RNA sequence: GGGAACGACUCGAGUAGAGUCGAAAAGGAGGACGAAGCAUAUUUCUGUUUCUGGAGGAUUAUUUAUAAUCUGCCGGAAAGUCUUGCAGGUGGCUGGGAUAUGUUCAGUCUGGAAGAAUUAAGCACGAAAACGUGUCCUUGUUCGCAAGGACACGAACUUAAUAAUAAGCUUCGGCUUAUUAUUAAGAAAAGAAACAACAACAACAAC
Reactivity to 2A3 in 0.01 (KOAc 150mM, MgCl2 10mM, bicine 150mM(pH8.5), 24C), signal-to-noise 1, nucleotides 027 to 156: g060g030a040g010g020a000c060g020a040a010g000c030a030u040a050u060u140u080c060u100g100u000u020u000c020u020g010g000a020g030g010a000u030u030a020u030u280u020a090u040a040a020u010c020u050g110c010c030g000g030a030a020a010g030u030c030u070u090g020c020a030g000g110u050g070g000c030u010g000g000g010a010u040a010u080g080u090u060c090a000g020u000c020u000g020g040a020a040g040a030a020u220u160a130a020g060c070a020c130g080a030a060a080a050c010g040u000g000u000c000c000u030u000g020u060u060c160g000c100a000a000g000g010a030c000a000c000g000a000a000
Reactivity to DMS in 0.01 (KOAc 150mM, MgCl2 10mM, bicine 150mM(pH8.5), 24C), signal-to-noise 2, nucleotides 027 to 156: g010g020a190g000g010a040c000g020a150a200g020c010a060u000a040u000u010u000c000u000g000u010u000u000c010u000g000g010a030g000g010a020u000u000a010u000u000u010a080u010a080a010u000c000u000g000c020c020g020g020a020a020a050g000u010c020u010u000g000c030a180g030g020u010g030g010c030u000g020g000g010a060u010a020u000g010u000u000c060a180g010u000c020u000g020g040a080a130g010a110a090u000u000a020a050g020c070a090c050g000a070a060a070a150c020g000u000g010u000c010c000u000u000g010u000u000c300g010c030a040a030g000g000a010c000a000c000g000a000a040